Notes
This 207-nucleotide RNA was probed chemically with 2A3 and DMS. It was measured as part of the RMDB library ARCHII. Conditions: 150 mM KOAc, 10 mM MgCl2 and 150 mM bicine (pH 8.5), 24 C.

RNA sequence: GGGAACGACUCGAGUAGAGUCGAAAAUGCAGGCAAGAGACCACCGUAAGCGUCGCUGCAACCAAUUAAGCGCCGAUUCUCAUCAGCGCGAGUACGCUCUCGCUGCCUAAGCGAAGCGUCUCUGUCGGCCCGGGAUAUGCCCUCGGUCCCGGUGCCGCUGACAGGUAAUCUUCGGAUUACCUGUCAGAAAAGAAACAACAACAACAAC
Reactivity to 2A3 in 0.01 (KOAc 150mM, MgCl2 10mM, bicine 150mM(pH8.5), 24C), signal-to-noise 2, nucleotides 027 to 156: u040g000c000a010g130g010c050a090a100g090a040g020a110c010c010a040c060c100g210u180a180a030g020c080g090u040c030g010c020u010g000c020a050a060c020c030a060a090u120u130a180a050g000c010g000c030c020g030a020u150u060c160u070c130a090u020c010a020g010c010g000c000g010a000g000u040a000c000g000c030u040c000u010c030g000c010u030g070c020c090u130a070a010g000c010g010a000a000g000c000g000u000c000u000c000u020g140u060c000g000g000c000c000c000g020g000g000a010u050a030u140g030c000c030c000u030c140g040g010u020c000c020c010g020g040u140g010c010c010g000
Reactivity to DMS in 0.01 (KOAc 150mM, MgCl2 10mM, bicine 150mM(pH8.5), 24C), signal-to-noise 1, nucleotides 027 to 156: u020g000c030a070g020g080c070a110a090g000a100g020a050c020c020a100c070c060g010u000a070a080g020c080g020u000c000g000c020u010g010c020a110a110c050c060a090a160u010u000a140a180g030c000g010c020c020g000a030u000u000c150u000c150a130u000c000a030g000c020g020c000g000a040g000u010a010c000g000c000u000c090u000c020g070c010u000g000c190c130u010a040a090g030c030g000a050a060g020c020g020u000c020u000c040u000g010u000c050g040g040c000c020c050g030g000g030a100u000a050u010g010c010c020c000u000c010g000g000u000c030c000c000g000g000u010g010c010c010g000